[RMDB]
RNA sequence: GGGAACGACUCGAGUAGAGUCGAAAAUGGUGGCGAGGAUCAAUCCGCCGAUAAGUGUCCAUAACAAGAGCCACAUCAUGAUGCGCACUUGAUGGUUAUGCGAACGCACUUUCCGCGCAAGGAUAUAUGUUCGAUUUGUAUUCGUACAAAUCGAACAAAAAGAAACAACAACAACAAC
Reactivity to 2A3 in 0.01 (KOAc 150mM, MgCl2 10mM, bicine 150mM(pH8.5), 24C), signal-to-noise 2, nucleotides 027 to 126: u120g030g020u060g030g030c050g000a040g010g060a050u090c040a020a080u040c050c030g010c030c020g040a040u020a070a050g040u040g010u040c030c010a020u040a050a050c010a010a100g050a000g110c010c010a020c010a060u080c020a010u080g080a060u060g040c110g000c050a050c040u000u040g000a010u040g100g000u050u030a050u050g050c080g030a040a030c070g000c020a020c020u040u000u000c050c020g050c050g000c060a050a050g130g000a000u080a030u010a020
Reactivity to DMS in 0.01 (KOAc 150mM, MgCl2 10mM, bicine 150mM(pH8.5), 24C), signal-to-noise 3, nucleotides 027 to 126: u010g000g050u000g000g020c060g020a120g030g000a090u000c150a150a080u010c100c040g020c020c040g010a080u000a010a060g040u000g020u010c080c010a050u000a020a060c070a100a100g010a060g020c100c010a260c060a060u000c070a040u000g000a080u000g020c170g050c120a120c030u000u000g020a080u000g020g000u000u020a050u000g000c140g010a070a060c170g000c030a050c060u000u000u010c020c040g020c080g010c130a090a120g000g000a080u000a070u000a070
This 177-nucleotide RNA was probed chemically with 2A3 and DMS. For 2A3 the reverse transcriptase was SuperScript II with manganese. Reactivities are given for positions 27 through 126. For DMS the reverse transcriptase was MarathonRT.